[RMDB]
An RNA of 177 nucleotides, treated with 2A3 and DMS and read out base by base. As a SHAPE reagent, 2A3 marks flexible, mostly unpaired nucleotides at the ribose 2'-OH. The RNA was probed in 150 mM KOAc, 10 mM MgCl2 and 150 mM bicine (pH 8.5) at 24 C. For 2A3 the reverse transcriptase was SuperScript II with manganese.

RNA sequence: GGGAACGACUCGAGUAGAGUCGAAAACAUCCACUGCUACGGCAGUGGAUGAACGAGGUAGGUACGCCUACCUCGAAAGCAGGAUGUGUGCAUACACAUUAAACGUCCAUGGUACGCCAUGGACGAACUCGAUGAUGGGAUUCGUCCCAUCAUCGAGAAAAGAAACAACAACAACAAC
Reactivity to 2A3 in 0.01 (KOAc 150mM, MgCl2 10mM, bicine 150mM(pH8.5), 24C), signal-to-noise 2, nucleotides 027 to 126: c010a000u010c000c000a020c010u000g020c010u020a100c220g150g010c000a000g000u000g000g000a010u000g000a030a010c000g000a000g020g000u000a000g000g030u040a020c210g070c030c000u020a000c000c000u010c000g000a030a020a000g080c100a030g090g170a030u000g020u000g000u080g060c110a080u120a290c020a010c010a010u000u060a080a140a050c010g000u000c010c000a000u000g030g000u040a040c240g070c030c000a000u000g000g000a000c000g000a000a000
Reactivity to DMS in 0.01 (KOAc 150mM, MgCl2 10mM, bicine 150mM(pH8.5), 24C), signal-to-noise 2, nucleotides 027 to 126: c070a000u000c000c000a000c000u000g000c010u010a070c300g050g000c000a000g000u000g050g000a000u000g000a050a030c000g030a010g000g010u010a000g020g010u010a160c200g000c000c000u000a000c000c000u000c000g000a000a060a110g000c180a140g010g010a000u000g010u000g000u000g000c200a110u010a010c010a040c000a050u000u000a080a120a300c010g010u000c000c000a020u000g000g010u000a180c300g000c030c000a000u000g000g000a000c000g010a010a050

High DMS reactivity at an A or C suggests that its Watson-Crick edge is free.